RNA sequence: GGGAACGACUCGAGUAGAGUCGAAAAUCGAGUGAACUAUCAAUUAACAAUUCGAAGGGAUUCAAUUCGUCGAAUUAUUGUCGAUCCACGAGUUGAAGGAUGCAACACAUGUGUUCAUUUUGAAGUAAGUUUUACGGUAUUUCGAUACCGUAAAACUAAAAGAAACAACAACAACAAC
Reactivity to DMS in 0.01 (KOAc 150mM, MgCl2 10mM, bicine 150mM(pH8.5), 24C), signal-to-noise 4, nucleotides 027 to 126: u020c020g010a060g050u000g000a040a030c030u000a150u020c100a070a070u010u010a110a090c080a060a050u010u010c050g010a070a110g020g000g020a100u000u010c110a050a060u000u000c030g000u010c110g010a030a030u000u000a080u000u010g010u010c110g000a020u000c070c050a070c030g010a070g000u000u000g000a070a080g010g010a070u010g010c090a050a060c150a060c170a060u000g020u000g010u000u000c020a050u000u000u010u000g000a060a100g010u000a070
Reactivity to 2A3 in 0.01 (KOAc 150mM, MgCl2 10mM, bicine 150mM(pH8.5), 24C), signal-to-noise 3, nucleotides 027 to 126: u030c000g000a010g020u040g020a010a020c010u040a070u280c040a020a030u110u100a110a050c030a050a070u040u040c020g050a080a080g190g020g010a030u110u070c020a020a120u050u010c060g090u040c040g050a040a050u130u060a060u050u190g120u060c050g010a030u010c020c030a020c020g040a020g050u010u050g000a020a030g070g010a020u070g040c020a040a030c040a000c040a150u130g040u020g020u100u020c010a010u050u010u050u150g040a040a020g070u120a020